[RMDB]
RNA sequence: GGGAACGACUCGAGUAGAGUCGAAAAGCUCGAGAACCUCUUCUCUCCCUCCGCGGCCCUUCUUCGACUCGGACCGGCUCAUCUCGACAAGAGGCGGCAGUCCUCAGUGCUCUUACUCUUUUCUGUAAAGAGGAGACUGCUGGACUCGCCGCCCAAGGUUAUCAGUAAGGUUCGCCUUACUGAUAACAAAAGAAACAACAACAACAAC
Reactivity to 2A3 in 0.01 (KOAc 150mM, MgCl2 10mM, bicine 150mM(pH8.5), 24C), signal-to-noise 5, nucleotides 027 to 156: g040c030u030c050g030a020g020a200a150c010c060u080c050u130u010c050u040c040u050c030c010c010u050c020c050g010c040g030g000c020c000c000u050u030c050u050u030c030g010a040c020u020c020g020g160a060c040c000g000g020c020u000c020a100u020c010u010c010g030a040c040a110a040g050a070g040g000c010g000g000c000a000g000u010c000c000u000c000a020g000u140g210c000u020c010u070u220a270c010u040c020u040u090u170u080c130u210g270u300a040a010a000g010a000g000g000a000g000a000c000u010g060c070u020g000g010a010c000u020c080g000c000c000g000c000c000c000a000a000g010
Reactivity to DMS in 0.01 (KOAc 150mM, MgCl2 10mM, bicine 150mM(pH8.5), 24C), signal-to-noise 1, nucleotides 027 to 156: g020c000u000c040g020a090g000a070a240c070c030u000c040u000u000c030u010c030u000c020c010c000u000c050c030g000c060g020g090c000c030c030u010u000c040u010u000c030g040a050c040u000c020g000g000a120c100c050g000g000c070u020c060a250u000c020u010c060g020a190c130a110a220g000a170g030g010c020g010g050c040a060g000u000c000c010u010c040a030g030u000g040c090u020c030u020u030a300c030u000c010u000u030u000u000c210u010g040u000a040a020a040g000a050g000g000a060g010a060c010u010g000c120u000g000g010a050c010u000c100g020c010c000g010c000c010c000a020a100g020